[RMDB]
RNA sequence: GGGAACGACUCGAGUAGAGUCGAAAAGAAAGAAAGUACUGAAAGUAUUGUGGGAAAUAAUGUGGAAAUCAUUGACCGUUCCUGCGCUGGUAAGAAUAAAAUUUUAGUCCAGACACCACCAGUAUAACCAAUCUAGUGACCUUCGGGUCACUAGAAACAUUUACAAGCAGUUCGCUGCUUGUAAAUGAAAAGAAACAACAACAACAAC
Reactivity to DMS in 0.01 (KOAc 150mM, MgCl2 10mM, bicine 150mM(pH8.5), 24C), signal-to-noise 2, nucleotides 027 to 156: g010a160a060a090g010a140a130a100g010u000a120c010u000g010a100a060a110g020u000a050u020u010g030u000g040g030g000a120a080a060u000a010a000u000g010u000g000g000a180a110a300u000c020a050u020u000g030a080c030c010g010u000u010c030c050u000g040c020g030c000u000g010g010u000a110a070g020a030a040u000a040a060a070a300u040u000u010u000a100g030u000c000c020a070g000a170c150a100c050c010a040c000c030a040g020u000a050u000a040a130c100c050a070a090u000c010u000a000g000u000g010a000c050c000u000u010c300g010g060g040u010c000a000c010u000a010g000a030a070a100
Reactivity to 2A3 in 0.01 (KOAc 150mM, MgCl2 10mM, bicine 150mM(pH8.5), 24C), signal-to-noise 3, nucleotides 027 to 156: g040a020a070a000g060a060a110a010g020u010a020c010u030g040a090a120a030g090u130a140u300u180g010u020g010g000g020a000a030a030u020a010a000u050g000u010g010g020a000a010a000u020c010a010u010u030g030a040c020c000g050u110u140c020c030u040g010c020g000c010u000g000g010u030a030a020g030a060a080u210a150a100a150a150u060u080u040u040a000g010u000c000c000a010g010a050c010a010c040c000a000c020c010a010g010u040a030u030a130a030c060c060a060a030u010c000u010a010g000u000g010a000c010c000u000u020c230g050g000g000u000c000a000c000u010a000g000a000a000a000